[RMDB]
RNA sequence: GGGAACGACUCGAGUAGAGUCGAAAAGCUAGACGCCUCGGCUGGUUCGCGACGCAGACCCCCGGCCGUGGAUGCUCGCUCGGGCUCGGGAUCCGCCCAGGUAGCGGCCGGACCCUGGUCCCGCGCCUCACGCAUCGCUAUUCGUAGCGAUGCGUGAAAAAGAAACAACAACAACAAC
Reactivity to DMS in 0.01 (KOAc 150mM, MgCl2 10mM, bicine 150mM(pH8.5), 24C), signal-to-noise 1, nucleotides 027 to 126: g010c000u020a060g000a110c120g000c060c000u000c040g000g010c000u000g040g020u000u020c010g040c130g000a010c150g090c030a070g000a200c110c020c120c000c080g000g000c030c010g020u000g000g030a090u000g010c080u000c060g030c000u030c000g000g000g000c080u010c050g020g000g000a050u000c000c020g090c010c000c010a180g020g000u060a080g000c060g000g050c100c000g010g000a000c000c040c030u000g000g000u000c020c010c030g020c040g000c030c050
Reactivity to 2A3 in 0.01 (KOAc 150mM, MgCl2 10mM, bicine 150mM(pH8.5), 24C), signal-to-noise 2, nucleotides 027 to 126: g000c010u030a020g010a090c040g020c010c000u010c000g030g000c000u020g030g020u150u080c060g000c020g080a070c090g010c070a050g020a170c000c000c000c080c000g020g000c000c030g000u000g040g030a100u100g020c010u020c020g010c000u030c040g020g000g000c030u020c020g030g000g010a070u000c010c000g030c020c000c000a050g260g090u160a070g080c120g100g000c080c010g000g000a010c000c000c000u020g000g000u130c000c000c000g000c000g010c000c020